Source: RMDB library ARCHII, as collected in RNAgym. Chemical mapping of a 207-nucleotide RNA with 2A3 and DMS. DMS adducts were read by reverse transcription with MarathonRT. The DMS profile rests on 3,351 reads. 2A3 is a SHAPE reagent: it acylates the 2'-hydroxyl of flexible nucleotides of all four kinds.
RNA sequence: GGGAACGACUCGAGUAGAGUCGAAAAUAAACGAGAUCGUGUGGACGCUUCGGCUUGGAGAUCGAAACACUAAAUUGAAUCAAGCUAGUUUAUUCUUCGCGUGUCUGUCCGCAGGGGAUAAAUGAAGUUAAAGACCAGACUAAACGUGUAGUGCUGAGACUAGCACUAAGUUCGCUUAGUGCUAGUCAAAAGAAACAACAACAACAAC
Reactivity to 2A3 in 0.01 (KOAc 150mM, MgCl2 10mM, bicine 150mM(pH8.5), 24C), signal-to-noise 4, nucleotides 027 to 156: u140a020a100a060c110g000a010g010a160u130c070g010u040g010u000g030g040a010c050g020c000u010u000c030g050g000c000u000u010g000g010a010g000a010u070c030g020a000a040a010c050a010c060u160a060a090a170u160u170g050a000a010u030c010a000a010g000c000u000a000g020u000u030u010a040u030u010c000u120u220c060g000c000g010u010g010u000c010u010g010u020c000c010g010c020a040g030g000g000g030a000u020a010a000a020u040g010a010a000g020u060u270a090a020a020g030a020c010c080a000g010a010c010u090a080a000a110c090g040u040g020u040a090g030u040g100c030u020g010a000
Reactivity to DMS in 0.01 (KOAc 150mM, MgCl2 10mM, bicine 150mM(pH8.5), 24C), signal-to-noise 2, nucleotides 027 to 156: u000a070a050a110c040g000a110g050a060u000c050g020u010g010u000g010g020a240c080g000c050u000u020c020g010g010c060u040u050g030g000a100g010a050u010c000g020a260a070a060c040a090c080u000a020a080a090u000u000g020a120a140u000c050a050a070g020c020u000a150g000u000u010u000a010u010u000c000u000u000c040g000c050g080u000g020u000c090u000g040u000c110c010g020c000a020g000g020g010g000a040u000a020a050a050u000g010a080a090g010u000u000a040a070a140g000a080c020c030a020g020a040c020u000a030a000a060c020g060u000g000u010a100g030u010g010c030u010g000a300